[RMDB]
RNA sequence: GGGAACGACUCGAGUAGAGUCGAAAAACUAACACCGAUAUGCUUCGGGGAGCUGUAAGUAAGCUUUGAUCCGGAGAUUUCCGAAUGGGGAAACCCACUGUUCGUAAUGGAACAGUAUCUUUACCUGUAAUAAAGUCUGGUUCGCCAGACUUUAUUAAAAAGAAACAACAACAACAAC
Reactivity to 2A3 in 0.01 (KOAc 150mM, MgCl2 10mM, bicine 150mM(pH8.5), 24C), signal-to-noise 2, nucleotides 027 to 126: a020c050u060a090a030c070a040c020c050g010a020u040a000u160g090c000u000u000c010g010g010g000g000a000g050c000u000g020u100a150a080g230u020a030a020g110c000u250u170u050g030a010u000c020c000g030g000a010g000a000u030u010u010c060c040g090a130a120u110g000g000g000g040a010a070a040c000c010c020a000c000u000g000u000u020c010g060u090a110a080u120g080g020a000a040c000a000g010u000a080u020c050u100u160u060a180c060c060u150g070
Reactivity to DMS in 0.01 (KOAc 150mM, MgCl2 10mM, bicine 150mM(pH8.5), 24C), signal-to-noise 5, nucleotides 027 to 126: a090c090u000a080a080c110a120c140c090g010a050u000a030u010g010c010u000u000c010g000g000g000g000a010g030c010u000g000u010a130a130g020u010a160a020g020c000u000u000u010g010a040u010c000c000g000g000a010g000a060u000u000u000c030c060g010a080a080u010g010g000g000g010a070a090a120c020c030c020a080c000u000g010u000u000c000g010u000a150a090u010g000g000a010a000c000a010g010u000a040u010c060u010u000u010a120c140c080u000g010
Source: RMDB library OK2TRN, as collected in RNAgym. Chemical mapping of a 177-nucleotide RNA with 2A3 and DMS. The RNA was probed in 150 mM KOAc, 10 mM MgCl2 and 150 mM bicine (pH 8.5) at 24 C. For 2A3 the reverse transcriptase was SuperScript II with manganese. The DMS profile rests on 5,941 reads. The 2A3 profile rests on 1,230 reads.